RNA sequence: GGGAACGACUCGAGUAGAGUCGAAAAGACCAAUCGUUCGCGAUUGGUCAAAAGGUGGAUGCUACGCUACCGAAGUAGCAAAAGUGCAGCUACAAAGCACAUAAACUUGGUUGUUCGCAACCAAGAAGGUGAGUAUUUACUUCGGUAAAUACUCACCAAAAGAAACAACAACAACAAC
Reactivity to 2A3 in 0.01 (KOAc 150mM, MgCl2 10mM, bicine 150mM(pH8.5), 24C), signal-to-noise 2, nucleotides 027 to 126: g000a000c000c000a010a000u010c000g030u030u060c230g010c010g170a000u000u000g000g010u000c010a040a000a000a000g060g010u070g040g040a080u070g020c040u050a030c070g000c030u010a020c000c060g080a110a010g030u020a000g000c000a000a070a040a040g040u020g000c020a020g010c030u030a110c080a110a120a040g040c030a020c010a120u250a000a090a030c000u000u000g020g010u010u010g030u040u060c200g000c080a000a000c000c010a000a000g030a020a000
Reactivity to DMS in 0.01 (KOAc 150mM, MgCl2 10mM, bicine 150mM(pH8.5), 24C), signal-to-noise 2, nucleotides 027 to 126: g020a020c000c000a030a000u000c000g010u010u010c290g030c000g060a030u000u010g010g020u000c000a000a010a090a170g020g000u000g010g000a110u010g000c060u000a020c080g020c170u000a090c050c020g000a070a110g020u020a000g020c020a070a040a090a040g000u000g000c010a010g010c040u010a120c210a050a080a040g000c050a060c070a080u010a110a050a300c000u000u000g030g000u000u010g000u000u010c170g000c020a010a020c000c000a000a000g000a070a060
Source: RMDB library M2PK50, as collected in RNAgym. Chemical mapping of a 177-nucleotide RNA with 2A3 and DMS. DMS adducts were read by reverse transcription with MarathonRT. For 2A3, 3,934 sequencing reads were counted. Reactivities are given for positions 27 through 126.